[RMDB]
RNA sequence: GGGAACGACUCGAGUAGAGUCGAAAAACAGUCAGUACGCUGACUGACGGAAACGGGAGCCGGGCUUGGGACAAGAGCCAUCCCAAGUCCAAGGCCAAGUAGGCUCUAGUGAUGGUACGCCAUCACAAAAACUGGUCUACCUUCGGGUAGACCAGAAGUAGGAUGUAACCUUCGGGUUACAUCCUACAAAAGAAACAACAACAACAAC
Reactivity to 2A3 in 0.01 (KOAc 150mM, MgCl2 10mM, bicine 150mM(pH8.5), 24C), signal-to-noise 3, nucleotides 027 to 156: a000c000a020g000u000c000a000g010u040a040c230g020c130u010g000a000c000u010g060a050c040g080g050a080a110a050c070g080g060g030a070g040c010c020g020g010g000c000u010u000g010g030g000a020c020a080a060g010a010g010c010c000a010u000c010c010c000a010a000g000u000c000c000a050a040g020g000c020c000a090a040g100u110a130g050g000c010u030c000u040a020g000u000g020a030u010g030g000u040a050c300g050c010c000a000u000c000a000c010a010a070a000a000a000c000u000g000g000u000c000u000a000c010c000u020u130c190g120g000g000u000a000g000a020c000c000a000g000a000a020
This 207-nucleotide RNA was probed chemically with 2A3. 2A3 adducts were read by reverse transcription with SuperScript II with manganese. It was measured as part of the RMDB library M2RFPK. The RNA was probed in 150 mM KOAc, 10 mM MgCl2 and 150 mM bicine (pH 8.5) at 24 C.